[RMDB]
RNA sequence: GGGAACGACUCGAGUAGAGUCGAAAAGGCAGGAAUAGAAUGGGCCGAAUCUAGUGUCUCACUGCAGGCCAGAUGCUAUUUUUGUUUGGCGCAAGGCCUGGUGGCUGAUGCGGCUGUGUUCUAAGAGCAAUAUUAUUAUAUUCGUAUAAUAAUAUUGAAAAGAAACAACAACAACAAC
Reactivity to 2A3 in 0.01 (KOAc 150mM, MgCl2 10mM, bicine 150mM(pH8.5), 24C), signal-to-noise 2, nucleotides 027 to 126: g070g010c020a030g060g030a120a030u010a000g020a040a000u040g030g000g000c000c000g020a000a000u020c030u040a030g060u050g120u100c020u080c110a020c030u090g040c020a010g000g000c000c000a010g050a020u040g000c000u000a060u020u040u020u050u090g260u120u140u060g010g000c010g000c040a020a020g000g000c000c000u020g040g000u020g000g000c010u020g000a010u030g010c010g000g040c030u090g050u050g000u120u000c010u030a080a020g000a000g030
Reactivity to DMS in 0.01 (KOAc 150mM, MgCl2 10mM, bicine 150mM(pH8.5), 24C), signal-to-noise 4, nucleotides 027 to 126: g010g010c040a070g020g000a140a080u010a010g010a060a010u010g000g000g010c010c000g010a080a040u020c020u060a020g030u010g010u050c190u060c030a070c040u020g030c070a040g010g010c010c000a040g010a160u020g000c000u000a010u000u020u050u030u040g010u020u010u010g010g010c010g030c070a220a130g010g000c000c010u010g010g010u000g000g000c000u000g000a030u010g000c020g020g010c000u010g010u030g010u000u010c010u000a060a120g000a160g010

Source information
Structure probing data (2A3 and DMS) for a 177-nucleotide construct. The DMS profile rests on 8,287 reads. 2A3 adducts were read by reverse transcription with SuperScript II with manganese. Values cover nucleotides 27 to 126.